[RMDB]
RNA sequence: GGGAACGACUCGAGUAGAGUCGAAAAAGAAAUAGCGAUAAUCGUAAGAGAAAUGUCCUUCACAUAGCGGUACGCACAGAACUAUUAGUAGCGCAAUAGCUAUUGAAGGACAUUACCUGCCAAAAAAACUUCUAAGGUACUUCGGUACCUUAGAAGUAAAAGAAACAACAACAACAAC
Reactivity to 2A3 in 0.01 (KOAc 150mM, MgCl2 10mM, bicine 150mM(pH8.5), 24C), signal-to-noise 1, nucleotides 027 to 126: a020g120a000a010a070u160a010g010c030g040a070u110a090a080u160c030g030u020a020a080g020a020g020a120a030a010u010g010u010c000c000u000u020c000a090c030a050u010a000g000c000g010g050u110a020c050g080c060a000c040a090g300a250a030c120u110a150u300u220a050g020u040a050g020c040g000c000a080a050u090a070g050c000u020a000u020u000g000a000a020g000g000a010c020a000u000u000a000c000c010u050g000c010c050a000a030a080a000a000a060
Reactivity to DMS in 0.01 (KOAc 150mM, MgCl2 10mM, bicine 150mM(pH8.5), 24C), signal-to-noise 1, nucleotides 027 to 126: a070g010a080a120a060u000a080g010c020g020a210u020a110a080u030c040g020u000a100a080g010a080g000a050a040a010u020g000u000c010c000u010u000c000a000c300a000u010a000g030c000g000g050u000a070c020g040c000a040c090a140g000a090a140c260u030a160u010u000a090g020u000a060g000c000g020c010a030a070u000a110g010c000u000a000u000u000g000a000a000g000g000a000c000a010u000u000a060c080c010u000g010c010c050a020a000a060a020a020a030
The data come from the RNA Mapping Database (RMDB), library M2PK90.
An RNA of 177 nucleotides, treated with 2A3 and DMS and read out base by base.
The 2A3 profile rests on 778 reads.